Chemical mapping of a 177-nucleotide RNA with DMS and 2A3. For 2A3 the reverse transcriptase was SuperScript II with manganese. The RNA was probed in 150 mM KOAc, 10 mM MgCl2 and 150 mM bicine (pH 8.5) at 24 C. It was measured as part of the RMDB libraries RFM100 and RFMREP. For DMS the reverse transcriptase was MarathonRT. Values are in units of 0.01, from 0 to 300, in steps of 10.
RNA sequence: GGGAACGACUCGAGUAGAGUCGAAAAGUGAGUAAGGUAUAGUUAAUCUGCCCUACACUGGGGGACAACACUUAGAAAUGAGUGCUAAUACCCCAUACUCCUACCUAACAUAAGUUAGGUAGGGAAAUUUCAUAGCGAUUUUCGAAUCGCUAUGAAAAAAAGAAACAACAACAACAAC
Reactivity to DMS in 0.01 (KOAc 150mM, MgCl2 10mM, bicine 150mM(pH8.5), 24C), signal-to-noise 4, nucleotides 027 to 126: g020u020g010a110g020u020a010a050g010g010u030a070u030a040g000u010u040a120a080u000c030u010g000c010c020c060u000a020c040a100c190u000g000g010g000g010g020a090c210a130a160c000a010c000u010u000a020g000a080a130a130u000g000a000g000u000g000c100u010a080a110u010a160c000c010c010c010a100u030a040c100u050c000c000u000a000c000c000u000a000a010c010a150u050a120a120g020u000u000a000g000g000u000a000g000g010g010a010a050a120
Reactivity to 2A3 in 0.01 (KOAc 150mM, MgCl2 10mM, bicine 150mM(pH8.5), 24C), signal-to-noise 6, nucleotides 027 to 126: g110u080g050a050g040u070a080a050g090g030u080a100u140a170g140u110u150a120a060u070c020u030g030c000c000c000u020a030c050a010c040u050g000g000g000g020g020a010c020a070a000c000a020c010u030u020a020g060a040a110a070u110g000a010g000u000g010c010u040a050a040u060a110c010c000c000c000a000u060a020c030u020c000c000u000a000c000c000u010a010a010c020a120u240a300a060g000u000u000a000g000g000u000a000g010g000g000a000a010a040